[RMDB]
RNA sequence: GGGAACGACUCGAGUAGAGUCGAAAAUCUAGACAGACCUGCGGUUUUAUAGCAGUUUUGGCAGUCAACUUCAGCUUGUGCCUGAGCAGACGGGGUUGUGGUGGCCCGCCAGCGGGGGAUGCCAGGCACAACGGGAAUCGUUCGCGAUUCCCGUUGUAAAAGAAACAACAACAACAAC
Reactivity to DMS in 0.01 (KOAc 150mM, MgCl2 10mM, bicine 150mM(pH8.5), 24C), signal-to-noise 9, nucleotides 027 to 126: u040c030u010a090g000a080c040a040g010a050c100c010u000g000c020g000g010u020u030u030u030a090u030a130g010c020a030g000u000u000u010u010g010g010c030a060g000u010c060a060a100c100u010u010c070a120g000c130u020u010g010u000g000c010c000u000g000a130g010c010a030g010a130c070g000g000g000g010u000u010g010u000g010g010u000g000g000c020c010c020g010c050c030a070g000c060g000g000g010g000g010a180u010g000c010c010a020g000g000c020
Reactivity to 2A3 in 0.01 (KOAc 150mM, MgCl2 10mM, bicine 150mM(pH8.5), 24C), signal-to-noise 7, nucleotides 027 to 126: u040c000u000a040g030a070c040a020g080a070c010c010u030g020c040g070g100u050u060u110u180a190u170a070g020c010a010g020u030u020u060u050g020g020c010a020g040u050c030a040a030c040u120u070c040a070g030c050u100u110g020u030g010c010c000u050g020a050g030c010a010g020a070c040g020g000g030g000u090u110g040u060g080g070u050g030g020c000c010c000g010c020c010a020g010c020g020g030g000g010g010a010u030g010c000c000a010g000g000c000
The data come from the RNA Mapping Database (RMDB), libraries RFM100 and RFMREP. This 177-nucleotide RNA was probed chemically with DMS and 2A3. For 2A3 the reverse transcriptase was SuperScript II with manganese.